The record gives the reactivity of an RNA of 207 nucleotides to 2A3. The data come from the RNA Mapping Database (RMDB), library RSTRND. The 2A3 profile rests on 638 reads.
RNA sequence: GGGAACGACUCGAGUAGAGUCGAAAAGUGGGUGCGGAAUUGGAGUGGUGCAUGCCGAGCAUCAGUGAGCUCGUAAAUCCAGCUGAAACAAACCAACUGCGAACGACGAACGUUUCGCCCUCGCCGCUUAAACACCGGUGAGCGUCUCAACGGCAGGCAGCCAGUACAUGUUCGCAUGUACUGGCUGAAAAGAAACAACAACAACAAC
Reactivity to 2A3 in 0.01 (KOAc 150mM, MgCl2 10mM, bicine 150mM(pH8.5), 24C), signal-to-noise 1, nucleotides 027 to 156: g080u120g000g000g000u040g030c060g020g000a070a180u120u090g110g000a010g030u060g000g060u030g040c120a160u170g040c000c010g030a040g000c040a040u030c010a000g040u040g140a040g000c030u030c020g000u070a060a060a000u030c010c010a000g030c000u100g080a160a090a030c080a020a030a090c020c050a060a060c090u090g000c000g070a050a020c030g170a030c020g010a110a020c030g040u000u090u030c000g000c010c010c000u010c000g010c020c000g040c020u000u010a040a070a000c010a000c010c010g050g000u000g000a000g020c000g010u000c010u030c110a040a130c030g000g000c000a020g010g010